[RMDB]
RNA sequence: GGGAACGACUCGAGUAGAGUCGAAAAGAUAUGGAAGUGAACUACAUACAUGACGUCGUUGAAAUCGGAAACGAUGGAGACGGAGUGUAUGCACUUCCUAAGUCAUAGGUCGACUUCGGUCGACCAACGGCUAGAACUAGUUCGCUAGUUCUAGCCGAAAAGAAACAACAACAACAAC
Reactivity to DMS in 0.01 (KOAc 150mM, MgCl2 10mM, bicine 150mM(pH8.5), 24C), signal-to-noise 1, nucleotides 027 to 126: g010a090u020a300u010g000g000a040a000g040u010g000a090a010c150u000a290c010a000u000a000c020a000u000g000a300c010g010u000c000g000u000u020g000a040a150a020u000c010g010g010a220a090a200c000g000a010u010g000g000a090g010a030c010g000g000a280g000u000g000u010a000u000g000c000a000c000u010u010c000c000u000a010a140g010u000c000a090u000a120g030g020u000c000g020a050c010u000u040c220g010g000u010c020g000a010c010c030a040a060
Reactivity to 2A3 in 0.01 (KOAc 150mM, MgCl2 10mM, bicine 150mM(pH8.5), 24C), signal-to-noise 2, nucleotides 027 to 126: g020a010u070a020u200g000g010a000a000g000u020g010a060a030c080u210a030c300a030u010a000c000a020u030g040a020c000g030u030c010g240u300u040g020a010a030a000u000c020g030g030a060a040a010c010g000a010u010g020g030a020g000a010c000g010g000a010g010u000g000u010a000u000g040c020a000c000u000u000c000c000u010a110a010g030u000c020a070u160a210g030g000u000c000g010a000c000u070u040c290g100g000u000c010g010a000c000c000a000a000
This 177-nucleotide RNA was probed chemically with DMS and 2A3. DMS adducts were read by reverse transcription with MarathonRT. High 2A3 reactivity points to a flexible backbone, as in loops and unpaired stretches. The 2A3 profile rests on 2,969 reads. Conditions: 150 mM KOAc, 10 mM MgCl2 and 150 mM bicine (pH 8.5), 24 C. Reactivities are given for positions 27 through 126. Source: RMDB library TTRDEL, as collected in RNAgym.